Overview: Structure probing data (2A3 and DMS) for a 177-nucleotide construct. High DMS reactivity at an A or C suggests that its Watson-Crick edge is free. The DMS profile rests on 12,258 reads. The 2A3 profile rests on 4,307 reads. The RNA was probed in 150 mM KOAc, 10 mM MgCl2 and 150 mM bicine (pH 8.5) at 24 C.
RNA sequence: GGGAACGACUCGAGUAGAGUCGAAAAUAUCUCAGCUUCUAAACUAGGAGCAAAUGUAAAAAUGAUAUCAUGCAUAGGGGAAGAUGGCUUAGGAGAGGAGUUAAUAAGAAAUUUUAGAACGAAUAAACAGGUACGUAAUAUUCGUAUUACGUACCUGAAAAGAAACAACAACAACAAC
Reactivity to 2A3 in 0.01 (KOAc 150mM, MgCl2 10mM, bicine 150mM(pH8.5), 24C), signal-to-noise 6, nucleotides 027 to 126: u150a110u000c020u000c020a030g010c030u020u000c020u060a150a200a300c060u050a080g030g010a030g020c020a010a020a040u270g020u200a040a080a090a020a020u090g070a060u060a050u200c080a030u120g040c000a010u070a090g030g000g000g030a020a000g030a030u060g000g000c020u030u030a020g010g050a040g020a010g070g020a010g010u050u050a070a040u080a150a010g130a110a060a020u100u200u020u090a050g040a080a020c080g040a100a070u080a090a120a000
Reactivity to DMS in 0.01 (KOAc 150mM, MgCl2 10mM, bicine 150mM(pH8.5), 24C), signal-to-noise 6, nucleotides 027 to 126: u030a060u010c010u000c070a170g020c030u000u000c000u000a040a140a110c260u020a050g000g000a040g030c020a050a070a080u030g000u030a020a040a060a130a090u030g010a090u010a090u010c070a060u020g030c050a060u020a070g010g010g000g010a040a020g000a040u010g010g010c080u020u000a060g000g010a020g000a050g010g010a080g000u020u000a050a050u020a110a070g010a040a050a090u030u010u030u010a100g010a060a060c110g010a090a090u030a050a060a110